[RMDB]
RNA sequence: GGGAACGACUCGAGUAGAGUCGAAAAGAAGGAAAGAAAGAAGCCCUGCCUGGGGGCUGCCGCAAGGCGCUAUCAGGACGUGGAUUAGUCGGGCAGUGCCACGGUUCGAGAAAACCCCGACAGCCAAAAAACACACCCUCGUUCGCGAGGGUGUGAAGAUCUACCUAAAGUUCGCUUUAGGUAGAUCAAAAGAAACAACAACAACAAC
Reactivity to 2A3 in 0.01 (KOAc 150mM, MgCl2 10mM, bicine 150mM(pH8.5), 24C), signal-to-noise 1, nucleotides 027 to 156: g040a050a090g080g030a140a070a080g020a050a150a080g060a160a020g040c010c000c010u010g020c000c000u010g020g010g000g070g000c110u070g000c010c000g020c030a030a020g020g000c000g010c060u020a010u170c000a000g000g010a000c020g010u020g000g000a010u000u040a040g010u000c030g000g020g000c150a040g010u010g000c000c000a000c010g020g040u140u130c040g010a000g020a060a030a020a000c000c000c000c010g020a000c000a030g060c080c030a030a060a140a100a100a000c010a010c010a000c010c020c000u030c000g050u090u050c110g020c010g130a000g000g000g000u000g000u010g000a000a000

This 207-nucleotide RNA was probed chemically with 2A3. High 2A3 reactivity points to a flexible backbone, as in loops and unpaired stretches. Source: RMDB library M2RFPK, as collected in RNAgym. The RNA was probed in 150 mM KOAc, 10 mM MgCl2 and 150 mM bicine (pH 8.5) at 24 C.